[RMDB]
RNA sequence: GGGAACGACUCGAGUAGAGUCGAAAAUGAGCAGCGGCGAGUCAUUCGCACCAUCCUAGAAUAUGCCGACAAGGUCUUCACCUACAUCUUCAUCAUGGAGAUGCUGCUCAAAUGGGUGGCCUACGGCAGACCAUCCUUCAUUCGUGAAGGAUGGUCUAAAAGAAACAACAACAACAAC
Reactivity to DMS in 0.01 (KOAc 150mM, MgCl2 10mM, bicine 150mM(pH8.5), 24C), signal-to-noise 4, nucleotides 027 to 126: u010g000a020g010c030a040g030c090g020g010c010g010a060g020u010c200a140u010u000c000g010c030a190c130c070a130u000c030c040u000a110g010a090a090u000a080u000g030c010c020g010a120c170a070a040g010g010u000c110u000u000c090a060c010c010u000a100c110a030u000c010u000u010c000a120u020c270a100u020g020g000a020g000a020u000g000c030u000g000c020u010c030a020a050a060u020g010g000g030u000g000g010c010c020u010a100c040g010g000c010
Reactivity to 2A3 in 0.01 (KOAc 150mM, MgCl2 10mM, bicine 150mM(pH8.5), 24C), signal-to-noise 4, nucleotides 027 to 126: u080g000a010g000c020a000g020c010g080g000c020g010a010g060u300c110a170u160u020c040g000c020a020c030c030a060u060c020c020u040a020g040a040a090u210a110u160g000c020c000g070a150c140a100a010g020g000u020c080u140u130c070a070c020c000u050a080c010a060u010c000u020u010c010a200u040c030a130u260g000g010a010g010a020u030g000c010u010g000c000u020c010a050a090a020u070g010g000g000u010g000g010c000c000u040a040c010g010g040c010